[RMDB]
RNA sequence: GGGAACGACUCGAGUAGAGUCGAAAAGAUAUGGAGACCAGACAGACAUGCGUGUCGGAAACGACAACGCAACAGCUGUGUGGUCUCCUAAGUCAAACAAAUACGCUCGUUCGCGAGCGUAUUUGAAUCAAUAAAGAACGUUCGCGUUCUUUAUUGAAAAAGAAACAACAACAACAAC
Reactivity to DMS in 0.01 (KOAc 150mM, MgCl2 10mM, bicine 150mM(pH8.5), 24C), signal-to-noise 4, nucleotides 027 to 126: g000a030u010a300u000g000g000a010g010a010c000c000a020g000a010c000a010g000a110c100a250u010g000c000g030u010g000u010c010g000g010a060a070a160c000g000a010c000a040a050c000g010c000a010a030c260a110g000c010u000g000u000g000u000g000g000u000c000u000c000c000u000a000a060g000u000c020a150a110a210c000a010a010a010u000a000c000g000c000u000c000g010u000u010c210g020c010g010a010g010c000g000u000a000u000u000u000g000a100a130
Reactivity to 2A3 in 0.01 (KOAc 150mM, MgCl2 10mM, bicine 150mM(pH8.5), 24C), signal-to-noise 5, nucleotides 027 to 126: g020a010u030a020u120g000g000a010g000a000c000c000a010g060a070c010a010g080a090c030a080u060g000c000g010u000g000u000c000g020g020a040a050a010c000g010a000c030a260a070c100g030c010a030a020c050a060g180c000u000g000u020g040u000g020g010u010c000u000c000c000u000a000a000g000u000c000a060a040a040c010a000a000a000u000a010c000g010c000u000c000g060u070u080c300g020c010g150a000g000c000g000u000a000u000u000u000g000a000a020